[RMDB]
RNA sequence: GGGAACGACUCGAGUAGAGUCGAAAAGUACUCACCUGUCGUCGUCGACGAAGGCCGGUGAGCAGUAAGCCGGACGGUCCCCUCGCGGCCGAUCCUCUGGAGCUCUGCUCUAAGAUCUUCGCUGCUGGCAGUAAGAUACGUUCGCGUAUCUUACUGCAAAAGAAACAACAACAACAAC
Reactivity to 2A3 in 0.01 (KOAc 150mM, MgCl2 10mM, bicine 150mM(pH8.5), 24C), signal-to-noise 1, nucleotides 027 to 126: g010u050a100c010u000c010a040c000c020u050g050u040c010g000u000c020g030u060c110g090a300c020g030a050a000g030g000c040c050g030g020u020g010a000g010c010a010g070u110a080a020g000c050c030g040g080a050c060g000g080u050c030c010c010c010u060c040g000c050g020g000c020c020g000a020u000c020c000u050c050u030g010g000a010g000c030u000c110u300g010c010u030c020u130a050a040g010a020u000c000u040u100c060g030c020u060g030c010u050g070
Reactivity to DMS in 0.01 (KOAc 150mM, MgCl2 10mM, bicine 150mM(pH8.5), 24C), signal-to-noise 2, nucleotides 027 to 126: g000u020a070c010u000c010a020c000c000u010g000u010c020g010u000c010g010u010c290g020a130c060g010a050a020g020g000c000c080g010g010u000g010a020g010c040a050g020u000a060a160g000c020c010g020g010a070c090g000g000u000c030c010c020c090u010c150g000c030g000g020c010c210g000a020u000c010c000u000c020u000g000g010a030g000c030u010c240u030g010c010u000c020u010a070a050g000a060u000c010u010u000c200g010c010u010g010c030u000g040